[RMDB]
RNA sequence: GGGAACGACUCGAGUAGAGUCGAAAAUAUCCUCGUUUCGACGAGGAUAACAGAAAACUCAUGCCAAAUAAAACGCUGACAGGCAUCAGAAAAGUCAGCGAAACAUACGGGUCUUCGGACCCGUAAAAUCCAUAAGUGCAUUCGUGCACUUAUGGAUAAAAGAAACAACAACAACAAC
Reactivity to 2A3 in 0.01 (KOAc 150mM, MgCl2 10mM, bicine 150mM(pH8.5), 24C), signal-to-noise 1, nucleotides 027 to 126: u040a000u000c000c000u000c010g020u080u010u110c170g070a060c000g020a000g030g070a000u000a000a010c010a040g180a030a100a020a030c000u050c040a010u040g020c010c000a100a060a010u120a060a180a050a040c070g000c020u010g000a000c000a040g040g060c010a070u160c030a050g170a000a080a000a000g000u000c020a000g000c010g010a030a010a010c040a010u120a040c010g040g020g000u000c010u040u050c140g180g000a010c000c020c010g000u000a010a040a030
Reactivity to DMS in 0.01 (KOAc 150mM, MgCl2 10mM, bicine 150mM(pH8.5), 24C), signal-to-noise 2, nucleotides 027 to 126: u000a000u000c000c000u010c000g060u000u010u010c090g020a050c000g000a020g000g000a000u000a000a030c130a140g000a130a090a180a060c030u000c000a150u000g020c010c030a140a090a150u000a060a080a090a120c020g030c000u000g000a000c010a160g000g000c020a050u000c110a130g010a080a030a080a110g000u000c000a000g020c000g010a020a070a070c200a100u000a020c000g030g010g010u000c010u030u020c300g020g000a000c000c000c010g010u000a000a010a020